The record gives the reactivity of an RNA of 207 nucleotides to 2A3. Values cover nucleotides 27 to 156. Source: RMDB library M2RFOK, as collected in RNAgym.
[RMDB]
RNA sequence: GGGAACGACUCGAGUAGAGUCGAAAAAACGUUGCAUGAUCGUAAAACAUGCCCGGCUUACCGUGAGCCGCCUUCGAAAGAAAGGUUUACACGGACUCUGUUGCGUUACGCACGUACCUAACUUGUGAAAACGGCAUCUUGUUCGCAAGAUGCCGAACCACAGGCAGAAGUUCGCUUCUGCCUGUGGAAAAGAAACAACAACAACAAC
Reactivity to 2A3 in 0.01 (KOAc 150mM, MgCl2 10mM, bicine 150mM(pH8.5), 24C), signal-to-noise 2, nucleotides 027 to 156: a000a000c000g000u000u000g000c000a010u010g040a050u210c020g070u150a040a200a000a000c000a000u000g000c000c020c000g000g000c010u010u070a110c010c000g000u000g020a000g000c000c000g010c050c000u040u040c030g150a110a050a040g030a020a050a000g020g040u020u030u070a040c010a000c000g060g000a070c070u120c080u160g080u150u060g000c030g020u040u050a070c140g000c010a000c010g030u070a050c010c000u070a130a210c060u080u080g050u040g160a070a040a030a020c000g000g000c000a000u000c000u020u040g010u070u060c160g000c100a000a000g010a000u000g000c000c000g000a000a000
Reactivities are rounded to 0.1 and cut off at 0 and 3.